[RMDB]
RNA sequence: GGGAACGACUCGAGUAGAGUCGAAAAAGUAGGUACGCCUACAGGGCCGAUGAUGUGAACCAUGCUCCUACGGUCUAAACCUGUGGGGAGGAUUUCCAAACCAUAUUUCCCAAGAGCUGAGGCCUAAACCAGGUUGGUGGUUCGCCACCAACCUGGUAAAAGAAACAACAACAACAAC
Reactivity to 2A3 in 0.01 (KOAc 150mM, MgCl2 10mM, bicine 150mM(pH8.5), 24C), signal-to-noise 2, nucleotides 027 to 126: a060g020u070a010g030g040u100a020c220g090c020c000u000a000c020a000g000g000g010c000c000g010a080u130g000a010u180g210u090g040a040a000c010c010a210u110g080c000u020c000c000u000a030c000g000g000u060c070u110a150a280a130c000c000u050g010u040g000g020g000g000a050g000g000a130u110u250u060c040c000a030a020a020c040c000a000u010a110u120u070u030c000c000c060a020a040g030a070g000c000u000g010a010g000g000c000c000u020a140a020